The record gives the reactivity of an RNA of 177 nucleotides to DMS and 2A3. The data come from the RNA Mapping Database (RMDB), library OK2TRN. Conditions: 150 mM KOAc, 10 mM MgCl2 and 150 mM bicine (pH 8.5), 24 C. The DMS profile rests on 2,560 reads. Reactivities are given for positions 27 through 126.

RNA sequence: GGGAACGACUCGAGUAGAGUCGAAAACCCAGUUGAGGCGAUCACACGCGCGGUGAAUGUCGAAGCGUUCAUGCCGUGCUCGGCGGCCGACACCCAGUAGGCGUCAAUGGCCUCGAUGUGUCUGGGGGCCUGUUUUCCUUUUCGAAGGAAAACAGGCAAAAGAAACAACAACAACAAC
Reactivity to DMS in 0.01 (KOAc 150mM, MgCl2 10mM, bicine 150mM(pH8.5), 24C), signal-to-noise 2, nucleotides 027 to 126: c010c020c000a230g010u000u000g010a020g030g020c000g020a140u010c230a120c020a020c000g000c170g050c010g010g030u000g000a000a010u000g020u010c120g010a110a180g010c040g010u010u000c010a040u010g000c010c000g020u000g010c040u000c060g020g000c020g010g010c010c010g000a160c050a150c000c030c020a050g000u000a300g010g000c000g000u030c030a070a070u010g000g010c010c000u000c000g010a010u000g010u000g010u010c000u010g000g000g000g000
Reactivity to 2A3 in 0.01 (KOAc 150mM, MgCl2 10mM, bicine 150mM(pH8.5), 24C), signal-to-noise 2, nucleotides 027 to 126: c000c040c000a000g010u030u090g010a000g000g000c030g030a210u180c030a020c000a010c080g100c010g020c030g140g020u040g040a040a020u070g030u160c300g150a190a030g060c000g010u010u010c020a030u120g030c000c000g010u040g000c010u030c030g030g010c030g100g300c010c000g030a030c030a070c020c020c020a020g010u010a010g020g040c020g000u040c050a020a220u120g060g000c020c020u010c010g020a040u070g060u010g050u020c010u030g010g000g020g090
DMS adducts were read by reverse transcription with MarathonRT.